An RNA of 177 nucleotides, treated with 2A3 and DMS and read out base by base. The 2A3 profile rests on 5,736 reads. DMS adducts were read by reverse transcription with MarathonRT. The RNA was probed in 150 mM KOAc, 10 mM MgCl2 and 150 mM bicine (pH 8.5) at 24 C. The DMS profile rests on 5,470 reads.
[RMDB]
RNA sequence: GGGAACGACUCGAGUAGAGUCGAAAAGGCCGAGAGUUCGCUCUCGGCCAAAGAAUAAAAGAGCGAACCCAACCCAAUCAACGCUCAAAGAAGGGAGGGAAAAAAGCAUAAUCUUCGGAUUAUGCAACAGUACAAUAUGGUUCGCCAUAUUGUACUGAAAAGAAACAACAACAACAAC
Reactivity to 2A3 in 0.01 (KOAc 150mM, MgCl2 10mM, bicine 150mM(pH8.5), 24C), signal-to-noise 3, nucleotides 027 to 126: g010g000c000c020g020a010g000a000g020u120u140c240g040c100u000c010u000c020g020g000c010c000a000a000a010g000a000a020u140a080a100a020a020g020a000g020c020g020a030a030c010c000c020a030a060c010c020c020a020a060u110c040a060a090c050g020c020u030c070a080a050a020g080a030a040g020g020g000a050g010g000g000a060a110a010a010a020a000g010c000a000u000a000a000u020c010u010u060c210g080g000a000u000u010a010u010g000c000a000a000
Reactivity to DMS in 0.01 (KOAc 150mM, MgCl2 10mM, bicine 150mM(pH8.5), 24C), signal-to-noise 4, nucleotides 027 to 126: g010g000c000c000g030a020g020a010g030u000u020c180g020c000u000c010u000c020g020g020c000c010a010a020a030g010a130a090u010a060a060a120a110g000a020g000c000g010a110a120c080c050c050a080a120c010c030c020a110a120u000c090a090a110c050g010c020u000c040a090a080a090g000a090a060g000g000g000a160g000g000g000a000a030a040a110a060a050g010c000a000u000a000a010u000c000u000u020c180g010g000a000u000u000a000u000g010c010a030a050